[RMDB]
RNA sequence: GGGAACGACUCGAGUAGAGUCGAAAAGAUAUGGAGCGCCAGGAAACGCUGUGGGUCGGAAACGACCUUAUCAGCUCGCCUGGACGCUCCUAAGUCAAAUCCCAUCCUCGUUCGCGAGGAUGGGAAAUCCUAUGUACUCCUUCGGGAGUACAUAGGAAAAAGAAACAACAACAACAAC
Reactivity to 2A3 in 0.01 (KOAc 150mM, MgCl2 10mM, bicine 150mM(pH8.5), 24C), signal-to-noise 2, nucleotides 027 to 126: g000a010u000a010u070g000g000a010g000c010g000c010c000a020g000g090a130a090a140c300g040c010u010g010u030g020g000g000u010c010g000g000a010a000a000c000g010a010c040c000u020u040a190u160c000a000g000c090u250c300g000c000c000u000g000g060a000c000g000c000u010c000c000u010a000a010g000u000c000a000a000a220u000c000c020c000a000u040c000c000u030c010g060u130u070c140g050c000g200a050g000g010a000u000g000g010g000a050a000a010
Reactivity to DMS in 0.01 (KOAc 150mM, MgCl2 10mM, bicine 150mM(pH8.5), 24C), signal-to-noise 2, nucleotides 027 to 126: g000a010u000a040u010g010g000a010g020c000g030c020c000a020g020g000a050a150a160c230g010c000u000g020u000g000g000g000u000c000g020g000a010a030a050c000g020a010c010c000u000u000a010u010c000a010g010c010u010c300g000c000c000u000g000g010a080c000g070c000u000c000c000u010a000a050g000u000c010a150a160a220u000c020c000c000a010u000c000c010u010c000g030u000u000c200g020c000g000a000g000g010a000u000g000g000g000a000a010a050
Chemical mapping of a 177-nucleotide RNA with 2A3 and DMS. High DMS reactivity at an A or C suggests that its Watson-Crick edge is free. For DMS, 2,495 sequencing reads were counted. For 2A3, 4,193 sequencing reads were counted. 2A3 is a SHAPE reagent: it acylates the 2'-hydroxyl of flexible nucleotides of all four kinds. For DMS the reverse transcriptase was MarathonRT.